[RMDB]
RNA sequence: GGGAACGACUCGAGUAGAGUCGAAAAGACUAACAAAUUCUGUAGUAGCAAUCAUUAUUAUUGCCAGAGAAUUUGCCGUAACUGGUUUACGUUUACUACAAAUUGAACAAGGAUUUGUAAGUGCAGCAGUAUGCUUCGAUUUCGAUCGAAGCAUACUAAAAGAAACAACAACAACAAC
Reactivity to 2A3 in 0.01 (KOAc 150mM, MgCl2 10mM, bicine 150mM(pH8.5), 24C), signal-to-noise 2, nucleotides 027 to 126: g010a020c010u010a050a010c010a010a050a010u010u000c020u080g130u120a080g020u060a030g030c010a010a030u060c070a070u120u280a070u200u050a030u160u020g010c020c050a040g040a010g050a200a070u100u040u080g010c020c020g020u020a020a030c020u090g060g060u040u110u130a070c060g050u060u170u020a000c010u020a000c010a020a090a120u050u130g020a100a020c060a120a020g080g010a010u010u000u000g030u010a000a150g010u000g070c040a040g070c010
Reactivity to DMS in 0.01 (KOAc 150mM, MgCl2 10mM, bicine 150mM(pH8.5), 24C), signal-to-noise 3, nucleotides 027 to 126: g010a130c030u000a100a070c020a010a020a000u000u010c030u000g030u010a100g030u010a130g000c000a000a010u000c300a110u010u010a120u000u010a040u000u000g000c010c060a220g010a140g000a040a030u000u000u000g020c030c030g000u000a050a060c030u000g030g020u010u000u010a050c170g020u000u000u000a030c020u010a040c000a020a050a050u000u000g010a100a130c180a130a100g000g000a010u000u000u000g000u000a040a030g030u000g020c190a110g030c190
Source: RMDB library OK2TRN, as collected in RNAgym. The record gives the reactivity of an RNA of 177 nucleotides to 2A3 and DMS. For 2A3 the reverse transcriptase was SuperScript II with manganese. Conditions: 150 mM KOAc, 10 mM MgCl2 and 150 mM bicine (pH 8.5), 24 C.